Structure probing data (DMS and 2A3) for a 177-nucleotide construct. The RNA was probed in 150 mM KOAc, 10 mM MgCl2 and 150 mM bicine (pH 8.5) at 24 C. For DMS, 1,715 sequencing reads were counted. In probing experiments dimethyl sulfate is read out at A N1 and C N3, which are open when not base-paired. The 2A3 profile rests on 2,275 reads. Values cover nucleotides 27 to 126.

RNA sequence: GGGAACGACUCGAGUAGAGUCGAAAAGGGACUUUUCCCUAGGGUUUGAGCGGUCGAACCCAGGGGGAGUGUGAUCCAGGUACCGCCGUAGAAACUGGAUUACGACGCCUACCCGGGAUUCAAACCCCACAUCAGCAUAGUUCGCUAUGCUGAUGUGAAAAGAAACAACAACAACAAC
Reactivity to DMS in 0.01 (KOAc 150mM, MgCl2 10mM, bicine 150mM(pH8.5), 24C), signal-to-noise 2, nucleotides 027 to 126: g000g000g010a130c060u010u000u010u010c010c000c010u000a120g020g010g000u010u000u010g010a120g000c170g040g000u000c020g000a070a030c000c000c000a070g020g000g010g010g000a010g020u000g010u010g000a000u000c010c000a030g000g020u000a110c070c070g020c070c090g030u000a070g010a080a110a190c000u010g000g000a020u000u000a010c000g020a070c070g000c030c010u000a090c010c000c020g030g000g000a080u000u010c050a040a080a120c030c020c000
Reactivity to 2A3 in 0.01 (KOAc 150mM, MgCl2 10mM, bicine 150mM(pH8.5), 24C), signal-to-noise 2, nucleotides 027 to 126: g060g020g040a060c040u090u050u090u170c030c020c020u060a130g000g000g010u000u010u040g010a030g000c130g050g060u090c030g010a040a020c010c000c030a000g010g000g010g010g000a030g010u080g020u000g000a000u000c000c000a010g010g010u010a030c030c040g040c050c020g130u150a040g030a100a200a010c000u000g000g000a010u010u010a000c040g060a020c030g040c030c010u060a130c030c000c010g000g000g000a030u030u010c040a090a020a100c010c010c000